Notes: Structure probing data (2A3 and DMS) for a 177-nucleotide construct. Source: RMDB library OK2TST, as collected in RNAgym.
RNA sequence: GGGAACGACUCGAGUAGAGUCGAAAACACAAGAUUUCAUUCUGUUAUCCGGGCUAUUAAUUAUUCUGACCUUUGUGCUGUUUGUGGCCACUGUCUUUGCCGGGCGACUCUGGUGCGGCUACGCCUGGUAGAGAGAGGAAUUCGUUCCUCUCUCUACAAAAGAAACAACAACAACAAC
Reactivity to 2A3 in 0.01 (KOAc 150mM, MgCl2 10mM, bicine 150mM(pH8.5), 24C), signal-to-noise 3, nucleotides 027 to 126: c090a000c030a050a040g010a070u080u240u150c040a030u110u040c060u070g040u130u080a050u070c020c030g000g070g000c120u060a080u280u160a270a080u280u140a070u190u130c030u060g100a110c000c000u040u080u150g060u090g040c020u020g100u130u210u160g120u120g030g030c010c000a040c040u030g040u000c030u090u140u060g020c030c000g030g000g040c020g050a020c030u050c060u200g000g040u110g010c010g060g000c020u040a020c040g030c020c020u030g040
Reactivity to DMS in 0.01 (KOAc 150mM, MgCl2 10mM, bicine 150mM(pH8.5), 24C), signal-to-noise 4, nucleotides 027 to 126: c090a080c110a080a060g010a060u000u020u010c070a070u000u010c050u010g000u000u000a060u010c070c060g020g000g000c060u010a030u010u020a050a100u010u010a090u010u000c060u010g010a090c050c040u000u000u010g020u000g020c030u010g000u000u000u000g000u010g010g020c030c030a080c090u010g010u010c030u000u000u010g010c060c030g030g000g020c050g010a050c100u010c050u000g000g010u000g010c080g020g010c050u000a060c090g010c020c020u000g010

For DMS the reverse transcriptase was MarathonRT.